This 177-nucleotide RNA was probed chemically with 2A3 and DMS. Source: RMDB library M2PK50, as collected in RNAgym. 2A3 adducts were read by reverse transcription with SuperScript II with manganese.
[RMDB]
RNA sequence: GGGAACGACUCGAGUAGAGUCGAAAAUUGAACGGAUUCGUCCGUUCAACGCGUGCGAUCCAAACGUAGUACAAAAGUACACACGAAAGCACAAGGAUCAAAUGAUACAGCCGUUCGCGGCUGUAAAUCAAGACGUAUCAUUCGUGAUACGUCUUGAAAAAGAAACAACAACAACAAC
Reactivity to 2A3 in 0.01 (KOAc 150mM, MgCl2 10mM, bicine 150mM(pH8.5), 24C), signal-to-noise 4, nucleotides 027 to 126: u020u010g000a000a000c000g000g000a010u020u050c160g060u000c020c000g010u000u000c000a000a010c030g040c040g030u040g000c040g000a030u010c020c000a000a020a090c050g030u040a040g000u010a050c010a020a300a030a050g010u010a000c090a020c010a000c030g090a230a050a030g040c050a030c050a100a050g020g000a030u050c000a030a050a080u150g050a030u010a050c010a000g000c020c000g020u050u080c260g010c010g080g010c000u000g000u020a000a000a010
Reactivity to DMS in 0.01 (KOAc 150mM, MgCl2 10mM, bicine 150mM(pH8.5), 24C), signal-to-noise 5, nucleotides 027 to 126: u000u000g000a010a010c010g010g000a010u000u000c210g020u000c010c000g000u000u000c000a010a010c130g000c190g000u010g010c050g000a080u000c000c040a080a130a230c120g010u000a100g050u000a000c030a070a070a130a150g000u000a000c010a090c080a090c080g010a070a060a120g010c030a030c070a100a120g000g000a060u000c050a090a080a120u000g010a200u000a010c010a010g000c000c000g000u000u010c240g010c010g020g000c000u010g000u000a000a060a130